[RMDB]
RNA sequence: GGGAACGACUCGAGUAGAGUCGAAAAGAGAACAUGACCUCUAGGGGCAAGGCCCAGCUCUGUCUCAUCUCCUCCAGAUAUCUUUGCUGCCACCAAAGCAUAGAGCAGCCAUGCUGGAAGGGCUCCAACCUACAUAGGAGUUCGCUCCUAUGUAGGUAAAAGAAACAACAACAACAAC
Reactivity to DMS in 0.01 (KOAc 150mM, MgCl2 10mM, bicine 150mM(pH8.5), 24C), signal-to-noise 7, nucleotides 027 to 126: g010a050g000a090a120c100a090u010g000a090c060c010u000c050u010a110g010g010g000g020c100a090a070g010g000c020c010c050a120g000c040u000c020u000g010u000c020u000c040a130u000c060u000c010c020u000c010c030a040g000a080u010a060u010c070u010u000u000g000c020u000g010c040c050a140c110c100a080a080a090g010c130a060u000a060g000a110g010c070a040g010c060c190a030u010g020c000u000g010g010a060a100g010g000g000c060u010c040c050a120
Reactivity to 2A3 in 0.01 (KOAc 150mM, MgCl2 10mM, bicine 150mM(pH8.5), 24C), signal-to-noise 6, nucleotides 027 to 126: g030a000g010a050a030c060a190u190g070a110c020c020u040c070u130a100g040g010g000g000c070a080a050g090g010c010c010c010a010g010c010u020c030u030g050u030c010u010c030a130u020c050u030c020c010u000c000c000a000g010a100u110a070u170c090u030u060u060g010c010u020g010c010c020a090c030c050a140a080a000g010c020a070u090a100g070a030g010c010a000g000c030c010a050u080g010c000u000g010g020a070a050g050g020g000c000u000c010c010a030
The record gives the reactivity of an RNA of 177 nucleotides to DMS and 2A3. Reactivities are rounded to 0.1 and cut off at 0 and 3. For DMS, 8,647 sequencing reads were counted. The 2A3 profile rests on 11,131 reads. DMS adducts were read by reverse transcription with MarathonRT.